Record summary
Chemical mapping of a 207-nucleotide RNA with 2A3 and DMS. The reactions ran in a buffer of 150 mM KOAc, 10 mM MgCl2 and 150 mM bicine (pH 8.5), at 24 C. DMS adducts were read by reverse transcription with MarathonRT. Reactivities are given for positions 27 through 156. For 2A3 the reverse transcriptase was SuperScript II with manganese.

RNA sequence: GGGAACGACUCGAGUAGAGUCGAAAAGUGAAAGCUCCUUCUCUCGCAAUGUGUAACUCAUGAUUCUCAUGACCCCUGGUUGGAGAGAUCCGGACUAGGAGCAAGGGGGCCUCUGAUUCUGCCAGCCAAAACUGUCGUAAGUUCGCUUACGACAGAAGAAUCGAUAUUUGUUCGCAAAUAUCGAUUCAAAAGAAACAACAACAACAAC
Reactivity to 2A3 in 0.01 (KOAc 150mM, MgCl2 10mM, bicine 150mM(pH8.5), 24C), signal-to-noise 5, nucleotides 027 to 156: g060u060g050a120a040a020g000c010u020c000c010u060u030c020u010c010u020c010g110c100a060a120u100g060u040g030u160a060a030c020u020c030a010u050g040a180u300u050c140u030c120a010u040g040a060c000c000c000c010u050g060g000u020u030g040g000a030g010a010g000a030u060c070c050g050g020a040c040u070a050g020g010a020g000c010a020a060g000g000g000g000g000c000c000u020c050u050g080a130u080u020c020u110g070c020c030a020g010c020c000a040a080a060a080c010u000g000u000c000g000u000a000a000g020u010u100c190g010c170u000u000a000c000g000a000c000a000g000a000a000
Reactivity to DMS in 0.01 (KOAc 150mM, MgCl2 10mM, bicine 150mM(pH8.5), 24C), signal-to-noise 2, nucleotides 027 to 156: g030u020g010a080a070a100g000c010u010c010c000u000u000c000u010c000u010c020g000c060a080a040u000g010u000g030u010a020a080c050u000c050a060u000g010a120u000u010c120u000c010a100u000g000a100c010c010c010c020u000g010g050u000u000g050g010a070g010a090g000a110u010c040c050g000g020a070c050u000a110g000g010a110g060c020a060a070g010g020g020g020g030c060c020u000c040u000g020a140u000u000c020u010g040c020c050a100g040c040c020a050a070a140a160c000u000g020u000c010g000u000a000a040g010u000u010c300g000c000u000u000a000c000g000a030c000a000g010a030a070